Structure probing data (2A3) for a 207-nucleotide construct. Values cover nucleotides 27 to 156.
RNA sequence: GGGAACGACUCGAGUAGAGUCGAAAACAACACCUACGAUUACAUGAACGGCCGCGUGGUGGCGCCCUCGCUGGUGGACGCCUACAUCAACAUCGGGGCGCGCUGGUCGCUGGACCCCAUGGACAACGUCAACCCCUUCAACCACCACCGCAACGCGGGGUCUUGCUGAUUUCGAUCAGCAAGACCCAAAAGAAACAACAACAACAAC
Reactivity to 2A3 in 0.01 (KOAc 150mM, MgCl2 10mM, bicine 150mM(pH8.5), 24C), signal-to-noise 2, nucleotides 027 to 156: c040a000a030c010a040c010c010u100a090c070g070a120u160u140a190c070a090u190g160a190a040c030g000g050c030c000g020c030g030u030g000g070u060g020g080c010g010c010c020c040u000c060g100c110u080g000g040u000g000g080a030c030g030c050c050u060a070c000a100u040c040a010a050c010a030u030c060g050g000g000g010c000g000c000g000c020u080g140g070u160c020g000c000u040g070g070a200c000c000c000c010a000u020g030g020a080c030a140a000c070g030u030c040a000a190c000c000c000c000u130u210c030a070a080c010c020a010c020c040a030c020c060g020c080a110a000c020g000c000g060